[RMDB]
RNA sequence: GGGAACGACUCGAGUAGAGUCGAAAAAGAGUCAGCACUAGAGCUAUGCCCACGGGUGAGAAGUGGUGGAUAGACGGAAGUAGAUAUUGGGAUCAUGAUAAGGGAGGCUACGUUACAGGAUGGGCAGACCACACACUCAUUUCGAUGAGUGUGUGGUAAAAGAAACAACAACAACAAC
Reactivity to DMS in 0.01 (KOAc 150mM, MgCl2 10mM, bicine 150mM(pH8.5), 24C), signal-to-noise 3, nucleotides 027 to 126: a050g020a100g000u000c030a040g010c080a070c090u000a070g010a100g000c040u010a060u010g010c040c010c020a090c130g010g010g020u000g000a100g010a110a120g020u010g020g040u010g020g010a080u000a050g000a050c090g020g000a050a060g000u010a070g010a080u010a070u030u010g010g000g010a070u010c060a050u010g000a110u020a070a130g000g020g000a050g010g020c060u000a040c130g010u000u010a060c140a060g010g030a100u010g010g000g000c100a120g010
Reactivity to 2A3 in 0.01 (KOAc 150mM, MgCl2 10mM, bicine 150mM(pH8.5), 24C), signal-to-noise 2, nucleotides 027 to 126: a000g150a020g080u070c030a000g010c030a030c050u080a060g000a010g220c030u000a040u130g030c000c000c000a010c010g110g050g030u160g050a100g080a160a060g020u000g040g070u070g030g020a060u020a050g010a040c040g000g000a070a010g040u070a020g040a100u070a080u170u130g000g000g040a020u060c030a040u080g110a080u080a090a040g040g000g000a030g010g010c040u070a030c040g000u010u030a020c030a010g040g040a070u060g010g020g000c010a000g020
Annotation
Chemical mapping of a 177-nucleotide RNA with DMS and 2A3. Values cover nucleotides 27 to 126. It was measured as part of the RMDB library OK2TRN. 2A3 adducts were read by reverse transcription with SuperScript II with manganese. For DMS the reverse transcriptase was MarathonRT.